An RNA of 207 nucleotides, treated with 2A3 and DMS and read out base by base. It was measured as part of the RMDB library RNAMAK. The 2A3 profile rests on 4,948 reads. The RNA was probed in 150 mM KOAc, 10 mM MgCl2 and 150 mM bicine (pH 8.5) at 24 C.
[RMDB]
RNA sequence: GGGAACGACUCGAGUAGAGUCGAAAAACCUUUGUGACUGCGCCGAGUAACGGGAGUUCGGUAAUUCUCAACCCAUUGGGUUGAGUGCCAGAACGAAGAACGUUAUAUCGCAGUCACUCUGGUAAAACUUUGAUAAUUGUUCGCAAUUAUCAAAGAAUCUGCUAGUAUACUUCGGUAUACUAGCAGAAAAAGAAACAACAACAACAAC
Reactivity to 2A3 in 0.01 (KOAc 150mM, MgCl2 10mM, bicine 150mM(pH8.5), 24C), signal-to-noise 5, nucleotides 027 to 156: a000c000c000u010u000u010g000u000g010a010c010u010g000c010g020c060c170g230a140g180u000a000a000c000g010g000g010a040g000u000u010c020g000g010u100a220a260u290u050c000u000c000a000a010c030c000c070a300u210u300g010g000g000u000u000g000a010g000u010g000c000c030a110g010a020a000c020g020a140a020g030a030a000c000g000u000u000a030u000a010u060c000g000c000a000g000u000c000a000c000u000c000u000g000g000u050a070a090a020a060c000u010u000u000g000a000u000a000a000u000u000g020u040u080c190g010c110a000a000u010u000a000u000c000a000a000a000g000a000a080
Reactivity to DMS in 0.01 (KOAc 150mM, MgCl2 10mM, bicine 150mM(pH8.5), 24C), signal-to-noise 2, nucleotides 027 to 156: a060c000c000u000u000u010g010u010g000a000c030u020g020c010g000c300c140g030a300g040u000a020a000c020g020g000g000a240g030u000u010c010g020g000u000a030a070u010u010c010u010c000a010a000c010c010c010a300u000u000g080g000g040u000u010g000a010g170u000g000c020c010a210g040a020a000c010g000a140a220g010a130a130c020g030u010u000a030u000a120u010c000g000c010a040g010u000c000a010c030u000c010u000g020g030u000a030a070a180a120c010u000u000u000g010a030u010a020a010u000u010g000u000u010c300g040c010a010a030u000u010a000u000c000a000a030a010g020a070a130